[RMDB]
RNA sequence: GGGAACGACUCGAGUAGAGUCGAAAACAGUGCGCUCCGUUGACAUCGGACAUCAGCGUCGAGGAGAUUUUCGGUGGCGCGGCCUGUGGCGCGCGACUGGUGCGAUCCGCGGCUAUGAAAACCGGCGCGUUAACGCCAUCUUCGGAUGGCGUUAACGAAAAGAAACAACAACAACAAC
Reactivity to 2A3 in 0.01 (KOAc 150mM, MgCl2 10mM, bicine 150mM(pH8.5), 24C), signal-to-noise 2, nucleotides 027 to 126: c050a020g090u020g080c040g000c020u040c000c000g050u010u180g060a070c040a080u030c030g020g020a010c020a120u080c020a000g060c010g110u070c050g020a010g080g050a060g010a080u050u040u020u010c020g000g040u040g030g000c000g000c010g040g020c000c100u220g080u140g120g000c000g020c010g000c000g070a070c090u080g040g030u070g030c070g050a050u020c000c000g010c000g030g000c000u060a050u110g100a000a060a000a000c020c000g000g020c030g020
Reactivity to DMS in 0.01 (KOAc 150mM, MgCl2 10mM, bicine 150mM(pH8.5), 24C), signal-to-noise 1, nucleotides 027 to 126: c110a120g000u020g000c030g010c050u010c020c010g000u000u000g000a100c040a110u010c080g000g000a110c120a100u000c040a030g010c040g000u010c030g000a120g070g000a110g030a060u000u010u000u000c000g000g030u000g000g010c010g020c020g000g020c080c010u020g000u050g000g000c000g010c020g000c010g000a080c000u030g010g010u010g010c020g010a140u030c000c000g000c000g060g000c030u020a070u000g000a090a050a140a100c090c000g000g010c060g000
This 177-nucleotide RNA was probed chemically with 2A3 and DMS. The RNA was probed in 150 mM KOAc, 10 mM MgCl2 and 150 mM bicine (pH 8.5) at 24 C. Source: RMDB library OK1LIB, as collected in RNAgym. For DMS, 2,214 sequencing reads were counted.